Overview
Conditions: 150 mM KOAc, 10 mM MgCl2 and 150 mM bicine (pH 8.5), 24 C. Chemical mapping of a 170-nucleotide RNA with 2A3 and DMS.

RNA sequence: GGGAACGACUCGAGUAGAGUCGAAAAUUGUAGGAAGCAUGCUACAGAGUACAGAGAGUAUAUGGAAGCAUAUAAUCUUGUCUCUGCAUCAGGUUUCCGCCUUUGGUGUUAUAAGACCUUUGAUAUUAUACGUAACUCUUCGGAGUUACGAAAAGAAACAACAACAACAAC
Reactivity to 2A3 in 0.01 (KOAc 150mM, MgCl2 10mM, bicine 150mM(pH8.5), 24C), signal-to-noise 9, nucleotides 027 to 129: u140u090g050u060a090g000g000a010a000g010c010a010u010g010c000u020a020c010a010g010a000g020u200a020c040a020g260a000g000a010g160u010a000u000a000u010g040g070a110a040g150c020a000u000a000u000a010a040u010c000u010u020g000u000c000u000c000u000g000c000a010u010c010a000g010g000u000u000u000c000c010g020c000c000u140u060u150g030g000u040g040u110u060a070u020a090a040g040a030c020c000u100u090u200g100a090u080a060u140u090a040u020a010
Reactivity to DMS in 0.01 (KOAc 150mM, MgCl2 10mM, bicine 150mM(pH8.5), 24C), signal-to-noise 6, nucleotides 027 to 129: u050u060g000u000a120g010g000a030a030g050c000a000u010g030c070u010a090c020a030g000a000g040u060a040c000a030g010a040g020a010g010u000a020u020a030u000g000g030a110a060g080c020a000u000a000u010a020a020u020c000u010u040g010u020c020u000c020u000g020c070a050u020c030a010g010g030u020u020u010c000c030g020c090c050u050u040u050g030g030u000g020u010u000a080u020a040a030g000a070c030c010u060u050u080g030a110u060a110u050u060a050u000a080
Description:
The DMS profile rests on 40,371 reads.